Record summary
This 177-nucleotide RNA was probed chemically with DMS and 2A3. For DMS the reverse transcriptase was MarathonRT. Values are in units of 0.01, from 0 to 300, in steps of 10. The reactions ran in a buffer of 150 mM KOAc, 10 mM MgCl2 and 150 mM bicine (pH 8.5), at 24 C.
RNA sequence: GGGAACGACUCGAGUAGAGUCGAAAAGAAGAGAAGAAACGGCCAUUGGUAGGAAAGGCCGAACACGCGUGACCUACCAACACGCAAGGAGCAGGCUGGUAUACCUGCAAAGAGAGAGUAGGAGAAAACUACGCCGGUAUUUCGAUACCGGCGUAGUAAAAGAAACAACAACAACAAC
Reactivity to DMS in 0.01 (KOAc 150mM, MgCl2 10mM, bicine 150mM(pH8.5), 24C), signal-to-noise 2, nucleotides 027 to 126: g010a130a000g000a070g000a200a070g030a020a070a100c050g000g060c000c040a200u030u000g000g010u020a050g000g000a110a070a080g000g000c000c040g000a110a020c300a210c300g000c000g000u010g000a300c010c000u000a000c000c000a030a010c160a000c150g000c030a180a120g000g000a120g020c000a050g000g000c040u030g000g050u000a100u000a040c000c010u000g050c000a030a160a090g000a140g000a090g000a100g000u000a030g070g010a140g070a090a030a190
Reactivity to 2A3 in 0.01 (KOAc 150mM, MgCl2 10mM, bicine 150mM(pH8.5), 24C), signal-to-noise 2, nucleotides 027 to 126: g100a020a000g090a000g010a210a010g060a040a110a000c040g000g030c000c010a250u100u140g020g000u130a050g010g170a120a090a070g180g000c010c000g020a030a000c010a000c020g020c020g040u040g030a010c000c000u020a010c000c000a020a020c060a000c040g000c010a000a200g040g000a040g050c000a010g000g010c020u070g000g000u080a020u040a070c010c010u000g000c020a000a120a040g090a000g000a020g000a000g010u010a020g000g100a030g030a010a070a000